RNA sequence: GGGAACGACUCGAGUAGAGUCGAAAAGCCUAACAGUUCGCUGUUAGGCAAAUGCACAGACUUCGCAACUGUGAAAAACACAAGAGAAGUGUCUAUGCGAGGAUCGUUGCGUCUUCGGACGCAACAACCCUCCUACGAAAUUCGUUUCGUAGGAGGGAAAAGAAACAACAACAACAAC
Reactivity to 2A3 in 0.01 (KOAc 150mM, MgCl2 10mM, bicine 150mM(pH8.5), 24C), signal-to-noise 4, nucleotides 027 to 126: g000c000c000u000a020a000c000a010g080u100u120c170g050c110u000g010u000u010a000g010g000c000a030a020a010u130g000c000a030c000a010g030a030c020u010u010c020g030c080a070a100c080u010g000u030g140a140a010a020a030a000c030a010c010a020a040g080a000g020a210a010g050u040g060u110c040u070a040u050g010c020g050a050g090g020a120u180c120g010u000u010g000c000g000u000c000u010u030c140g060g000a000c000g000c000a000a000c000a000a000
Reactivity to DMS in 0.01 (KOAc 150mM, MgCl2 10mM, bicine 150mM(pH8.5), 24C), signal-to-noise 4, nucleotides 027 to 126: g010c000c000u020a020a010c000a010g010u000u000c220g030c000u000g000u000u020a000g000g020c000a010a010a020u010g000c000a020c050a000g010a050c010u000u000c020g000c080a130a240c210u000g010u000g000a060a090a100a130a100c000a020c020a030a180g020a170g000a020a040g000u000g010u010c050u010a120u000g010c010g020a080g010g010a080u020c150g010u000u000g000c010g010u000c000u000u000c140g020g010a000c010g000c000a010a000c010a050a090
Conditions: 150 mM KOAc, 10 mM MgCl2 and 150 mM bicine (pH 8.5), 24 C. Structure probing data (2A3 and DMS) for a 177-nucleotide construct. DMS (dimethyl sulfate) methylates the pairing face of unpaired adenines and cytosines. For DMS, 4,146 sequencing reads were counted. For 2A3 the reverse transcriptase was SuperScript II with manganese. For DMS the reverse transcriptase was MarathonRT.